[RMDB]
RNA sequence: GGGAACGACUCGAGUAGAGUCGAAAAGCUUUGUUGCUGCUGGAGUUGCAGGUGACGUUGCACAAUCGCGCCAAGGCGAGUCAACAUCCCUUGCUGUUGCCAGGCGUGACCGGUCAUCAAUACAUCAGCCGGAUAAUCGAUUCGUCGAUUAUCCGGCAAAAGAAACAACAACAACAAC
Reactivity to DMS in 0.01 (KOAc 150mM, MgCl2 10mM, bicine 150mM(pH8.5), 24C), signal-to-noise 1, nucleotides 027 to 126: g030c040u000u010u030g020u020u020g020c000u000g000c030u020g000g000a060g000u020u000g010c140a040g020g030u010g010a070c040g000u020u000g010c170a090c120a100a190u010c090g010c050g000c080c070a090a120g000g040c010g010a100g010u000c020a000a020c110a120u010c010c050c010u000u000g030c000u000g010u020u000g010c030c050a120g000g010c080g000u000g000a020c050c050g000g010u000c030a030u000c030a060a070u010a070c110a110u000c040a180
An RNA of 177 nucleotides, treated with DMS and read out base by base. Values are in units of 0.01, from 0 to 300, in steps of 10. Conditions: 150 mM KOAc, 10 mM MgCl2 and 150 mM bicine (pH 8.5), 24 C. The data come from the RNA Mapping Database (RMDB), library OK2TST. For DMS, 977 sequencing reads were counted.